RNA sequence: GGGAACGACUCGAGUAGAGUCGAAAAUGAAAUAAAGCGUACGAAGAACCACGUACGCAAACAGAAAAGCGGACCUACGAGCGCACAGCGCUCACGUAUGAGCGCAAAACAUAGGAAUUGAAAAAAAACUUAGAUAUGGAUUCGUCCAUAUCUAAGUAAAAGAAACAACAACAACAAC
Reactivity to 2A3 in 0.01 (KOAc 150mM, MgCl2 10mM, bicine 150mM(pH8.5), 24C), signal-to-noise 3, nucleotides 027 to 126: u050g010a050a030a020u250a130a100a030g000c000g000u000a010c020g050a250a090g030a150a020c040c010a020c010g010u010a000c010g000c020a010a040a000c050a020g160a020a120a050a030g000c010g010g030a040c000c000u020a020c070g160a020g070c020g010c010a030c030a150g000c000g000c000u000c000a020c020g110u140a100u210g000a020g010c000g000c000a020a070a000a000c020a010u060a020g020g040a050a120u170u120g100a130a090a000a000a010a020a000
Reactivity to DMS in 0.01 (KOAc 150mM, MgCl2 10mM, bicine 150mM(pH8.5), 24C), signal-to-noise 3, nucleotides 027 to 126: u000g030a150a090a120u020a120a130a200g040c000g030u000a000c000g030a090a050g020a170a070c080c060a060c020g000u010a000c000g010c000a010a060a070c130a090g000a070a070a140a080g010c020g020g020a030c040c010u000a040c050g000a120g000c050g020c000a100c170a160g030c000g000c000u000c020a010c300g010u010a070u010g010a050g000c020g020c010a070a040a050a040c030a070u000a020g010g030a180a090u020u020g000a000a030a000a050a140a110a130